[RMDB]
Record summary: An RNA of 207 nucleotides, treated with 2A3 and read out base by base. The reactions ran in a buffer of 150 mM KOAc, 10 mM MgCl2 and 150 mM bicine (pH 8.5), at 24 C. Reactivities are given for positions 27 through 156. Source: RMDB library OK3TST, as collected in RNAgym.
RNA sequence: GGGAACGACUCGAGUAGAGUCGAAAAAAUUGUGAUCAAAAUCAGCGCAAGGCGAUAAGAUACCUAGUAACGUGCUCCGCGAAAGUGAAGAGCGUGUUCGGUGUCCAAAGUUGUUGCUUAAGGGAGAGUAUAUCACAGCCAGUUUCCAGCACGGGAAGCAUGUGCAGGAUUUCGAUCCUGCACAUGCAAAAGAAACAACAACAACAAC
Reactivity to 2A3 in 0.01 (KOAc 150mM, MgCl2 10mM, bicine 150mM(pH8.5), 24C), signal-to-noise 1, nucleotides 027 to 156: a010a010u250u140g000u070g000a010u070c030a010a020a020a000u010c020a040g070c020g050c050a060a040g050g040c090g090a080u090a140a100g020a010u020a030c010c010u110a120g000u300a020a000c020g000u000g000c020u000c000c000g030c070g000a230a170a060g020u010g040a160a270g000a080g000c010g000u000g050u000u040c000g000g000u000g020u000c010c020a000a000a170g040u020u010g200u130u060g000c010u100u100a050a110g100g140g010a050g010a000g040u040a080u000a000u130c000a020c000a020g040c020c030a010g000u000u000u080c020c000a000g030c100a050c100g060g000g010a100a000